[RMDB]
Structure probing data (2A3 and DMS) for a 177-nucleotide construct. Reactivities are given for positions 27 through 126. It was measured as part of the RMDB library OK2TST. The DMS profile rests on 962 reads. In probing experiments dimethyl sulfate is read out at A N1 and C N3, which are open when not base-paired. DMS adducts were read by reverse transcription with MarathonRT. The reactions ran in a buffer of 150 mM KOAc, 10 mM MgCl2 and 150 mM bicine (pH 8.5), at 24 C.
RNA sequence: GGGAACGACUCGAGUAGAGUCGAAAAGGUAGCUUAGACAAAAAACUAGUUUUUGAAACGGUAAUUUACGUGUUGCUGUUUGCCUUUCAGUGAACUGAAAUUAUGCCUCAAACACAGCAAAUUAUUGGUCUCUCAUUCCAUUCGUGGAAUGAGAGACAAAAGAAACAACAACAACAAC
Reactivity to 2A3 in 0.01 (KOAc 150mM, MgCl2 10mM, bicine 150mM(pH8.5), 24C), signal-to-noise 2, nucleotides 027 to 126: g000g000u040a000g070c070u140u000a050g040a080c050a050a130a050a070a000a000c070u120a090g060u030u030u030u090u150g060a050a020a010c050g010g020u030a020a050u100u020u140a100c100g000u050g050u090u040g020c010u010g020u150u070u070g000c000c000u000u030u050c010a030g030u010g170a130a090c000u030g020a010a020a010u180u090a070u250g020c040c010u020c010a070a070a000c050a000c000a030g160c020a090a020a070u160u090a040u050u140g110
Reactivity to DMS in 0.01 (KOAc 150mM, MgCl2 10mM, bicine 150mM(pH8.5), 24C), signal-to-noise 1, nucleotides 027 to 126: g010g000u000a060g020c070u010u000a050g020a120c130a020a050a100a060a030a060c060u000a050g000u000u000u000u000u000g000a040a030a190c130g000g020u000a010a000u000u020u000a060c050g000u000g080u040u000g000c060u010g010u010u010u020g020c220c170u000u010u000c040a010g010u010g000a070a080c040u000g000a000a000a070u010u010a120u000g010c030c050u000c040a060a040a020c040a030c050a140g030c080a020a040a030u000u000a020u000u000g030